RNA sequence: GGGAACGACUCGAGUAGAGUCGAAAAAGCAGGCUUAGUUCUGUUGCUGGUACCUGGGGCCUCGGCUGGGGAGACUUGAGGUUCAGGAGGUGGUGACUCAUGAGGGGCUGCGGGAGCCGUGCCUCUCACGCACCUGCCCUGGUGCUGGCUGUGAGGGCGGUCAUGCUCGGUUCGCCGAGCAUGACCGAAAAGAAACAACAACAACAAC
Reactivity to 2A3 in 0.01 (KOAc 150mM, MgCl2 10mM, bicine 150mM(pH8.5), 24C), signal-to-noise 1, nucleotides 027 to 156: a000g010c030a010g030g000c050u210u170a060g050u120u030c020u040g150u200u060g010c010u000g020g000u040a040c020c010u020g000g000g020g010c000c020u000c030g040g000c040u060g040g010g060g010a020g050a060c030u050u150g020a040g060g000u060u070c030a030g140g040a050g000g030u040g040g040u070g060a090c020u040c190a110u060g010a000g000g020g050g000c100u150g010c020g000g080g000a040g100c070c000g000u010g040c000c000u000c000u000c010a000c010g000c000a010c010c000u090g060c000c000c000u010g000g000u020g000c000u030g010g000c000u000g040u020g040a090g000g030g010
Record summary:
Structure probing data (2A3) for a 207-nucleotide construct. The data come from the RNA Mapping Database (RMDB), library OK3TST. The RNA was probed in 150 mM KOAc, 10 mM MgCl2 and 150 mM bicine (pH 8.5) at 24 C.